This 177-nucleotide RNA was probed chemically with 2A3 and DMS.
The reactions ran in a buffer of 150 mM KOAc, 10 mM MgCl2 and 150 mM bicine (pH 8.5), at 24 C.
For DMS the reverse transcriptase was MarathonRT.
RNA sequence: GGGAACGACUCGAGUAGAGUCGAAAAUCCGAAGUUUCCCUCAGGAUAGCUGGAGCAGUAUUCUAGUUUCAUCUUGUAAAGACAAUGAUUAGCAGUUUCGGGGGCGUAAUGCCCUCAGCUGAUUCUCUCGUACGUAGAACUUCGGUUCUACGUACGAAAAAGAAACAACAACAACAAC
Reactivity to 2A3 in 0.01 (KOAc 150mM, MgCl2 10mM, bicine 150mM(pH8.5), 24C), signal-to-noise 4, nucleotides 027 to 126: u040c010c010g010a040a010g000u030u000u000c010c000c000u000c000a000g000g030a030u030a020g000c010u010g020g010a020g000c100a110g140u170a150u140u030c020u020a010g000u020u070u130c070a020u010c000u010u040g060u100a110a090a050g120a050c090a090a130u150g020a090u110u070a040g040c020a010g010u040u110u230c100g010g000g000g010g000c010g070u270a160a100u300g000c000c000c020u000c000a000g000c000u000g010a080u130u000c040u000c000
Reactivity to DMS in 0.01 (KOAc 150mM, MgCl2 10mM, bicine 150mM(pH8.5), 24C), signal-to-noise 3, nucleotides 027 to 126: u020c010c050g020a130a080g020u000u000u000c010c000c160u000c010a080g030g030a030u000a030g000c010u000g000g020a040g010c230a130g020u020a070u010u010c000u000a010g000u010u000u040c130a020u000c010u000u000g000u020a050a050a060g010a070c150a140a070u020g000a020u000u000a070g010c000a000g000u020u020u010c150g010g000g020g000g000c000g020u090a100a040u150g000c010c000c000u000c000a020g000c020u000g000a080u000u000c050u000c080